Chemical mapping of a 177-nucleotide RNA with DMS and 2A3. The 2A3 profile rests on 1,148 reads. The data come from the RNA Mapping Database (RMDB), library OK2TRN.
RNA sequence: GGGAACGACUCGAGUAGAGUCGAAAAUCGAAGAUUGUGGAGCAGUGGCAGCUAUUGUGUGUCAAACUCUAAUGCCUUGUUGUCGGAUUACCUGCACAACAUGCGCAGCAGCUAAUUCAGAUGAUGACAAUCCCGCAUUGUUCGCAAUGCGGGAUUGAAAAGAAACAACAACAACAAC
Reactivity to DMS in 0.01 (KOAc 150mM, MgCl2 10mM, bicine 150mM(pH8.5), 24C), signal-to-noise 2, nucleotides 027 to 126: u000c060g000a130a110g000a050u000u010g010u000g000g020a110g000c080a050g040u000g010g010c020a040g000c030u000a100u010u010g050u000g010u000g030u010c060a050a070a100c050u010c040u010a050a140u000g000c000c000u000u010g000u000u000g020u020c010g000g020a300u010u000a120c100c020u000g030c180a050c040a030a030c090a030u000g000c170g000c040a060g010c100a030g010c170u010a070a060u000u000c030a110g000a100u000g000a100u000g010a150
Reactivity to 2A3 in 0.01 (KOAc 150mM, MgCl2 10mM, bicine 150mM(pH8.5), 24C), signal-to-noise 1, nucleotides 027 to 126: u070c010g010a040a000g040a120u000u190g000u080g060g020a040g000c050a070g140u020g020g000c010a030g010c010u130a150u300u140g060u000g020u000g030u020c030a040a060a150c020u020c030u090a150a070u080g000c000c000u030u040g020u010u000g000u000c030g010g000a010u120u170a160c030c000u040g000c180a000c000a060a010c000a010u040g000c110g000c060a020g020c000a000g030c010u040a000a040u060u000c020a030g050a130u070g000a020u040g000a070